This 177-nucleotide RNA was probed chemically with DMS.
The RNA was probed in 150 mM KOAc, 10 mM MgCl2 and 150 mM bicine (pH 8.5) at 24 C.
For DMS, 5,843 sequencing reads were counted.
[RMDB]
RNA sequence: GGGAACGACUCGAGUAGAGUCGAAAAGAUAUGGAGCCACCUCCCAGGAGCAAUGAUGUUACGUAGUUGAGUCGGAAACGACUCAGGUUCGAAGUAAUUGAGCUCCCUGGGAGGUGGCUCCUAAGUCGAUAAGUUUAUUGUUCGCAAUAAACUUAUCAAAAGAAACAACAACAACAAC
Reactivity to DMS in 0.01 (KOAc 150mM, MgCl2 10mM, bicine 150mM(pH8.5), 24C), signal-to-noise 5, nucleotides 027 to 126: g010a120u010a300u000g000g010a010g020c000c000a000c000c000u000c000c000c000a040g010g010a050g010c010a180a200u010g000a120u010g000u000u000a040c000g000u000a210g010u010u000g010a020g010u000c000g000g010a130a120a210c010g000a010c000u000c000a010g000g010u010u000c050g010a150a300g000u000a030a010u000u000g000a170g010c000u000c180c070c040u000g000g000g000a010g010g020u000g000g000c010u000c000c000u000a000a080g010u000c110

DMS adducts were read by reverse transcription with MarathonRT.